[RMDB]
RNA sequence: GGGAACGACUCGAGUAGAGUCGAAAACCCUGGAACUUCGGUUCCAGGGCAUGGUGCAAAUCCCCCGCUGAAACGGAGCGAUAUCCGUCCCAAUAAUAUAAAAAGCUGAUGAUUUCGAUCAUCAGAAACGGAUUAUUUGAUUCGUCAAAUAAUCCGUAAAAGAAACAACAACAACAAC
Reactivity to DMS in 0.01 (KOAc 150mM, MgCl2 10mM, bicine 150mM(pH8.5), 24C), signal-to-noise 3, nucleotides 027 to 126: c000c000c010u000g000g000a010a010c000u010u020c210g030g010u000u000c000c000a020g020g000g030c030a020u000g010g010u000g010c240a070a160a100u010c010c000c000c020c000g020c020u000g010a090a090a020c010g010g010a020g000c050g010a050u020a000u000c000c000g010u000c060c070c100a090a100u020a060a100u000a150u010a090a060a050a150a130g000c000u010g010a000u000g000a030u000u000u000c170g010a020u000c000a000u000c000a010g000a010a060
Reactivity to 2A3 in 0.01 (KOAc 150mM, MgCl2 10mM, bicine 150mM(pH8.5), 24C), signal-to-noise 3, nucleotides 027 to 126: c000c000c000u000g020g000a000a000c000u030u100c250g110g000u010u000c010c000a000g000g000g010c020a050u090g050g040u110g070c040a050a040a180u100c020c010c010c010c000g000c020u070g080a020a070a000c010g000g000a000g000c000g020a030u000a000u020c000c000g010u030c000c000c000a060a040u220a180a060u130a010u130a150a230a040a020a010g050c010u000g000a010u000g000a000u020u070u170c200g050a010u010c000a000u000c000a000g040a030a030

This 177-nucleotide RNA was probed chemically with DMS and 2A3. For DMS, 2,553 sequencing reads were counted. For DMS the reverse transcriptase was MarathonRT. Source: RMDB library M2PK50, as collected in RNAgym. Reactivities are given for positions 27 through 126.